[RMDB]
RNA sequence: GGGAACGACUCGAGUAGAGUCGAAAAGAUGAUUAAAGAAGUUAAAAAUGGUGAAUCCUGGAUUAAUGUGCUCGCGUGCCGCUGUGUGCGCGCGCGGCUGGAGAUUUUUUUUUUCUCUCUGUUCUUCAACUUCUAAUUUUUUCGAAAAUUAGAAGUUAAAAGAAACAACAACAACAAC
Reactivity to DMS in 0.01 (KOAc 150mM, MgCl2 10mM, bicine 150mM(pH8.5), 24C), signal-to-noise 2, nucleotides 027 to 126: g000a100u010g020a080u010u010a020a060a060g000a140a080g000u020u000a010a050a060a130a110u010g000g010u000g000a110a090u010c020c030u000g000g000a300u010u010a040a060u020g020u010g010c000u020c020g010c000g010u000g000c160c000g030c130u040g020u030g030u010g010c020g010c020g010c050g000c040g000g030c050u000g000g010a130g000a010u010u000u000u000u020u020u070u010u090u010c030u010c010u010c090u010g000u000u000c000u000u000c290
Reactivity to 2A3 in 0.01 (KOAc 150mM, MgCl2 10mM, bicine 150mM(pH8.5), 24C), signal-to-noise 3, nucleotides 027 to 126: g020a060u160g000a000u060u080a010a030a050g030a040a010g060u080u160a040a000a030a050a060u110g070g020u080g110a050a040u120c000c000u030g060g020a070u080u120a170a100u240g090u060g100c050u060c080g000c000g000u010g100c090c010g000c120u080g080u070g050u120g170c020g010c000g000c000g020c000g010g000c030u040g000g010a030g020a060u070u010u020u030u030u030u000u050u110u030c030u000c000u000c050u040g020u030u010c010u020u050c010